[RMDB]
RNA sequence: GGGAACGACUCGAGUAGAGUCGAAAAUGUGCUACAAUGUUCAGCUGUUCUAAUAAAUGAGGAAAACAUUUACAGCACCAAACGCACAAUAUAAAUAGAGACUCAAAUACUGAUGCCUUUUCAAAACUCAUUACUACGGUAGAGUUUUGUUAUGUUAACUGACUUUUACUUUCGAGUAAAAGUCAGUAAAAGAAACAACAACAACAAC
Reactivity to DMS in 0.01 (KOAc 150mM, MgCl2 10mM, bicine 150mM(pH8.5), 24C), signal-to-noise 2, nucleotides 027 to 156: u000g000u010g020c030u000a200c110a050a070u010g000u000u000c070a200g030c040u010g000u000u000c070u010a070a090u000a020a030a050u010g010a120g050g010a140a090a050a070c030a030u010u000u010a120c110a050g010c000a110c070c040a070a080a090c090g030c020a070c050a130a130u000a090u000a070a050a110u000a120g000a220g030a050c010u000c020a040a120a180u000a090c200u020g020a100u000g010c000c000u000u000u000u020c070a010a030a030a050c030u000c010a060u010u000a090c050u000a050c240g040g000u000a190g000a050g000u000u000u000u000g000u000u000a070u010g000u030u020a130
Reactivity to 2A3 in 0.01 (KOAc 150mM, MgCl2 10mM, bicine 150mM(pH8.5), 24C), signal-to-noise 5, nucleotides 027 to 156: u050g000u000g000c000u010a060c080a130a180u080g040u100u150c040a080g000c010u050g030u120u050c100u200a130a090u100a170a190a040u090g030a110g120g130a050a090a030a000c000a000u030u040u070a020c010a000g000c020a040c010c040a030a100a020c040g010c010a010c000a050a040u170a020u090a110a160a020u170a030g120a020g020a060c010u050c080a060a080a100u120a090c040u070g030a060u090g060c010c010u040u100u000u010c000a000a000a020a020c000u000c010a070u110u130a000c010u000a010c130g090g000u010a010g000a000g000u000u010u020u010g010u030u040a110u080g060u050u100a070